Source: RMDB library OK1LIB, as collected in RNAgym. The record gives the reactivity of an RNA of 177 nucleotides to DMS and 2A3. For 2A3, 29,061 sequencing reads were counted. Values cover nucleotides 27 to 126. DMS adducts were read by reverse transcription with MarathonRT. For DMS, 42,785 sequencing reads were counted.

RNA sequence: GGGAACGACUCGAGUAGAGUCGAAAAGGACAAAAGUCCAGAGAUAGGAUGAGGAAUAGGAAUAGGCACGAUCGGAAAGAGACGAUUACGGUAGCCAGUUCGAUAGGCUUCGACUAUUCGACAUGUGGUAUCUACAUAGUUUCGACUAUGUAGAUACAAAAGAAACAACAACAACAAC
Reactivity to DMS in 0.01 (KOAc 150mM, MgCl2 10mM, bicine 150mM(pH8.5), 24C), signal-to-noise 9, nucleotides 027 to 126: g000g000a030c020a090a080a080a140g010u000c000c000a110g010a140g010a060u010a050g010g000a090u010g010a060g000g000a040a040u020a090g000g000a050a040u010a060g000g010c020a090c040g000a040u000c010g000g000a060a100a120g020a130g000a080c040g000a030u010u010a120c090g000g000u020a050g000c010c020a180g020u010u010c050g000a090u020a050g000g000c030u000u000c040g000a070c020u000a030u000u000c020g000a090c100a050u030g010u020g010
Reactivity to 2A3 in 0.01 (KOAc 150mM, MgCl2 10mM, bicine 150mM(pH8.5), 24C), signal-to-noise 7, nucleotides 027 to 126: g020g000a000c020a010a280a020a020g000u000c000c000a010g010a000g000a040u060a030g010g000a020u040g020a020g020g010a030a020u030a030g040g020a020a030u030a030g010g000c010a000c030g010a020u010c010g010g040a060a060a000g080a030g020a010c000g000a010u040u100a030c020g020g000u010a010g010c000c000a000g010u030u040c010g020a030u020a050g010g000c000u010u000c010g010a010c000u020a020u040u030c020g020a010c030a060u100g050u050g070